[RMDB]
RNA sequence: GGGAACGACUCGAGUAGAGUCGAAAACACCGGGUCAGGCCCGAGAGGGAGCAGCCCACCCCGGACCCGCGGCCGCUCGGGGGUCGCCGGAGGCAGGUCGGCCGGGGGAGUACCGGGCUCCGGGGGCCAAUUACUUGUCAUUCGUGACAAGUAAUUGAAAAGAAACAACAACAACAAC
Reactivity to DMS in 0.01 (KOAc 150mM, MgCl2 10mM, bicine 150mM(pH8.5), 24C), signal-to-noise 5, nucleotides 027 to 126: c090a140c080c030g010g000g010u010c030a300g000g000c010c000c010g000a180g000a210g010g000g000a030g000c020a250g000c000c000c020a150c010c000c000c010g000g000a120c020c020c030g010c110g010g000c030c020g000c020u010c020g010g020g010g010g010u020c060g000c020c010g020g000a120g020g010c060a080g010g000u020c050g000g010c010c000g000g000g000g000g010a050g020u020a050c140c020g000g000g000c070u000c010c000g000g000g000g000g000c090
Reactivity to 2A3 in 0.01 (KOAc 150mM, MgCl2 10mM, bicine 150mM(pH8.5), 24C), signal-to-noise 6, nucleotides 027 to 126: c050a020c010c040g010g010g020u070c020a020g000g030c010c000c010g030a040g020a020g020g020g010a020g010c010a000g000c000c000c000a060c000c000c000c000g000g010a020c000c010c000g050c130g050g020c010c030g100c110u010c020g090g000g020g010g080u070c020g020c040c030g110g060a150g090g050c130a090g020g040u130c040g020g120c000c000g010g000g000g010g010a030g010u050a150c010c020g000g000g000c020u010c010c000g000g000g000g010g000c000